[RMDB]
RNA sequence: GGGAACGACUCGAGUAGAGUCGAAAAGUCGCCGGUAAGAAAGCGCGCAUCGAGAAGGGCUGUGCGAAUGGUCAUGUCCUCGCGCGCCAGACGAAUGCACUCAUCGAUGUUGCGGGUGGAAUGGCCAAUCGUGGACGGUAUUCGUACCGUCCACGAUAAAAGAAACAACAACAACAAC
Reactivity to 2A3 in 0.01 (KOAc 150mM, MgCl2 10mM, bicine 150mM(pH8.5), 24C), signal-to-noise 1, nucleotides 027 to 126: g100u070c000g000c040c000g020g080u100a080a050g030a070a060a040g030c020g000c020g000c000a040u070c050g050a060g020a010a130g110g100g000c030u050g010u100g030c000g090a090a060u110g000g060u010c040a030u120g090u060c000c000u050c030g080c020g000c000g000c000c000a000g060a090c090g060a100a080u180g030c090a070c110u110c040a080u030c040g010a010u040g020u170u280g030c010g000g050g000u070g040g000a120a070u000g020g000c020c080a030
Reactivity to DMS in 0.01 (KOAc 150mM, MgCl2 10mM, bicine 150mM(pH8.5), 24C), signal-to-noise 2, nucleotides 027 to 126: g000u000c110g040c000c010g010g010u020a130a070g020a170a150a150g000c000g040c030g010c000a060u000c040g000a070g000a140a070g000g010g020c020u010g030u010g020c040g000a050a050u000g010g000u000c050a060u000g010u000c050c000u010c040g020c100g020c010g000c040c030a030g010a170c060g000a100a040u000g020c060a140c090u020c070a120u000c050g040a040u010g000u010u010g030c040g010g000g010u000g000g010a050a070u000g020g010c020c060a080